[RMDB]
RNA sequence: GGGAACGACUCGAGUAGAGUCGAAAAAGUCUCUGACCUGGGUAGAGUGGCAUCUGGUUGGUAGUGCCUGCCUCAUAUUAGCCAGGGACAAAGCAACGCCUUGUUUAUCCCAGCUUGGCUUUUGGUCUGUUCAUUUCACUUUCGAGUGAAAUGAACAAAAAGAAACAACAACAACAAC
Reactivity to 2A3 in 0.01 (KOAc 150mM, MgCl2 10mM, bicine 150mM(pH8.5), 24C), signal-to-noise 4, nucleotides 027 to 126: a010g070u010c000u010c020u050g090a070c000c000u010g010g010g030u030a030g020a060g070u040g030g000c010a050u050c150u120g160g040u090u100g100g070u110a100g030u040g040c000c000u020g020c010c010u040c020a040u070a130u210u150a030g090c010c000a020g000g000g020a010c030a010a080a000g030c010a030a060c070g010c000c000u100u030g080u090u110u110a070u030c000c000c010a010g020c000u010u030g000g010c000u070u060u050u050g070g030u040c040
Reactivity to DMS in 0.01 (KOAc 150mM, MgCl2 10mM, bicine 150mM(pH8.5), 24C), signal-to-noise 4, nucleotides 027 to 126: a070g010u020c000u000c020u010g020a210c020c020u010g000g000g000u010a060g010a050g010u010g010g000c020a050u040c110u010g000g000u000u000g020g020u010a110g020u010g000c020c020u000g000c140c010u000c040a080u030a090u010u010a030g000c030c000a010g000g020g000a050c020a050a080a070g010c080a080a070c200g000c020c010u000u000g010u000u010u020a140u030c010c000c020a300g010c050u000u010g000g010c020u000u010u020u020g000g000u030c090